The record gives the reactivity of an RNA of 170 nucleotides to DMS and 2A3. For DMS, 24,708 sequencing reads were counted. In probing experiments dimethyl sulfate is read out at A N1 and C N3, which are open when not base-paired. Conditions: 150 mM KOAc, 10 mM MgCl2 and 150 mM bicine (pH 8.5), 24 C.
RNA sequence: GGGAACGACUCGAGUAGAGUCGAAAAGCCCCUCGCUCGUAUCUCCGAGAGGAGACGAGAAGGAGGUGGAUCUCCCUUUGCCAUCCGAGGGGAUUGCGUCCUCCUUACGGAUGCCCAGGUCGGACCGAACGGGUUGUGUUCGCACAACCCAAAAGAAACAACAACAACAAC
Reactivity to DMS in 0.01 (KOAc 150mM, MgCl2 10mM, bicine 150mM(pH8.5), 24C), signal-to-noise 4, nucleotides 027 to 129: g030c000c000c000c000u010c050g020c030u000c020g000u060a110u040c010u000c030c010g020a300g000a200g060g010a020g020a010c000g010a020g010a100a070g010g000a040g030g020u090g000g000a140u020c090u020c050c030c020u030u030u030g030c130c030a060u020c000c050g040a080g080g000g000g000a080u000u000g040c060g000u020c000c000u000c010c050u010u010a080c070g040g020a040u000g000c020c010c020a130g030g020u000c060g000g000a160c000c030g000a010a020c150
Reactivity to 2A3 in 0.01 (KOAc 150mM, MgCl2 10mM, bicine 150mM(pH8.5), 24C), signal-to-noise 9, nucleotides 027 to 129: g020c000c000c000c000u010c030g040c000u000c000g070u090a200u050c000u010c000c000g020a030g020a060g090g000a000g000a010c000g010a000g020a010a090g160g020a020g000g030u270g040g020a090u020c060u050c040c000c000u040u090u080g030c020c010a010u000c000c000g010a030g000g010g000g010a020u030u190g070c050g070u020c010c000u060c010c000u030u070a050c030g020g000a020u010g010c000c010c010a040g010g020u040c010g000g030a040c020c020g060a080a050c080